[RMDB]
RNA sequence: GGGAACGACUCGAGUAGAGUCGAAAAGAUAUGGAGCCAUCGGAGCGCGAAACGUGGUGUCGGAAACGACACGCACGGAGCUCCAUGGCUCCUAAGUCAAAGUCGCCCGUGUUCGCACGGGCGACAACCUAACACAAAUGUUCGCAUUUGUGUUAGGAAAAGAAACAACAACAACAAC
Reactivity to DMS in 0.01 (KOAc 150mM, MgCl2 10mM, bicine 150mM(pH8.5), 24C), signal-to-noise 3, nucleotides 027 to 126: g000a020u000a010u010g000g000a010g000c010c000a010u000c300g040g000a010g030c010g070c230g000a090a050a080c000g040u000g010g010u000g010u000c000g020g000a010a000a010c010g000a000c000a010c000g020c000a000c000g020g010a010g020c000u000c000c000a010u000g000g000c000u000c000c000u000a000a060g000u000c000a120a150a210g010u000c000g010c010c000c000g020u000g000u000u020c200g000c000a010c000g000g000g020c000g000a000c000a010a050
Reactivity to 2A3 in 0.01 (KOAc 150mM, MgCl2 10mM, bicine 150mM(pH8.5), 24C), signal-to-noise 3, nucleotides 027 to 126: g000a000u010a000u060g000g010a000g020c030c020a030u100c300g060g010a010g030c060g010c240g260a190a060a000c010g000u000g000g000u000g020u010c000g000g000a010a000a000c000g000a000c020a000c010g070c020a000c000g010g000a010g000c010u010c000c000a000u000g000g020c000u010c000c000u010a000a000g000u000c010a020a040a020g000u000c000g010c010c000c010g000u020g020u020u080c300g010c180a000c000g000g020g000c000g010a000c000a000a000
Annotation: Structure probing data (DMS and 2A3) for a 177-nucleotide construct. DMS (dimethyl sulfate) methylates the pairing face of unpaired adenines and cytosines. High 2A3 reactivity points to a flexible backbone, as in loops and unpaired stretches. For DMS, 6,765 sequencing reads were counted.